[RMDB]
This 207-nucleotide RNA was probed chemically with DMS and 2A3. Conditions: 150 mM KOAc, 10 mM MgCl2 and 150 mM bicine (pH 8.5), 24 C. 2A3 adducts were read by reverse transcription with SuperScript II with manganese. For 2A3, 1,656 sequencing reads were counted. The DMS profile rests on 2,030 reads.
RNA sequence: GGGAACGACUCGAGUAGAGUCGAAAACUGCGCUGAGCACUUCUCCCCCAGCUUGCCUGUGUCCUAGGGAAUUGGAAGGUCAUCCUUCACAGGAUCGUGUGGAAGUCCUGCUCGGGGCGGAAGCAUUAUAAACCUUAGACGUUCGCGUCUAAGGUAACUGUUUAUUAGCGUUCGCGCUAAUAAACAGAAAAGAAACAACAACAACAAC
Reactivity to DMS in 0.01 (KOAc 150mM, MgCl2 10mM, bicine 150mM(pH8.5), 24C), signal-to-noise 1, nucleotides 027 to 156: c020u010g000c070g060c040u000g010a140g000c060a040c020u000u010c020u000c000c010c010c000c030a140g010c070u020u000g000c030c000u010g000u000g010u000c060c000u000a110g040g010g010a110a080u000u010g000g020a080a100g080g020u020c050a120u000c010c020u000u010c020a100c040a080g020g040a060u010c010g000u020g000u010g050g020a170a120g020u000c040c010u010g050c040u010c080g020g040g020g030c030g000g000a170a180g060c030a080u000u000a070u010a060a070a070c010c010u010u000a010g010a010c010g020u000u000c300g000c000g040u000c010u000a000a010g010g000u010a010a040
Reactivity to 2A3 in 0.01 (KOAc 150mM, MgCl2 10mM, bicine 150mM(pH8.5), 24C), signal-to-noise 3, nucleotides 027 to 156: c020u020g000c140g040c040u050g070a010g050c030a010c060u210u000c060u140c010c000c000c010c000a000g020c050u110u120g060c020c000u010g000u020g010u080c030c040u060a060g000g000g060a090a110u090u100g030g070a080a040g080g030u120c020a090u070c000c010u060u110c010a010c000a050g030g030a050u060c060g030u080g010u050g110g020a010a020g020u060c010c040u020g040c030u020c000g000g030g030g010c020g000g020a050a000g010c010a010u020u110a110u160a130a150a030c000c000u000u000a000g000a010c010g000u050u000c140g030c000g070u030c000u000a000a000g010g000u000a000a000